This 207-nucleotide RNA was probed chemically with DMS and 2A3. For 2A3, 12,016 sequencing reads were counted. It was measured as part of the RMDB library OK3TST.
RNA sequence: GGGAACGACUCGAGUAGAGUCGAAAAGAUGGCCAAACCUUACAGUUUGGGAGGGAUUUCGUAAGUGCAAUUUGUGUGUCACGCUGGGAGUUGUAUAGCUGAGCAUUUGCAUAGUGGAAUCACUCUUGCACGAUCCUGCGAGUUUCAGUACUUAUCCCUACCAUAUGCAUUUCGAUGCAUAUGGUAGAAAAGAAACAACAACAACAAC
Reactivity to DMS in 0.01 (KOAc 150mM, MgCl2 10mM, bicine 150mM(pH8.5), 24C), signal-to-noise 4, nucleotides 027 to 156: g010a110u010g010g010c000c010a020a040a060c020c020u010u000a150c130a070g010u000u010u020g000g000g000a090g000g000g010a080u000u000u010c040g050u010a090a270g020u010g000c020a040a060u010u000u000g030u000g040u010g020u000c030a070c120g020c030u000g000g020g010a150g020u000u010g030u000a100u000a090g020c020u020g000a200g000c010a090u000u000u000g020c020a050u000a160g020u000g000g000a050a080u000c010a030c010u000c030u000u000g020c060a090c060g000a080u000c030c040u010g000c020g000a090g010u000u000u010c070a110g000u010a110c060u000u000a150u010c080c070
Reactivity to 2A3 in 0.01 (KOAc 150mM, MgCl2 10mM, bicine 150mM(pH8.5), 24C), signal-to-noise 9, nucleotides 027 to 156: g040a040u080g050g030c020c000a020a010a020c020c030u160u210a070c060a050g020u030u030u030g020g010g010a020g030g010g010a020u030u040u030c070g050u160a170a180g040u010g020c030a040a070u030u190u060g040u010g020u020g100u040c040a040c140g000c010u030g030g070g050a170g050u100u080g050u160a080u090a080g010c020u010g020a000g020c010a030u020u020u050g000c010a020u050a060g090u080g030g020a010a010u040c010a010c020u020c000u020u090g030c050a040c060g020a050u050c010c000u030g040c030g030a040g000u040u050u050c050a040g040u050a070c030u110u090a080u180c040c020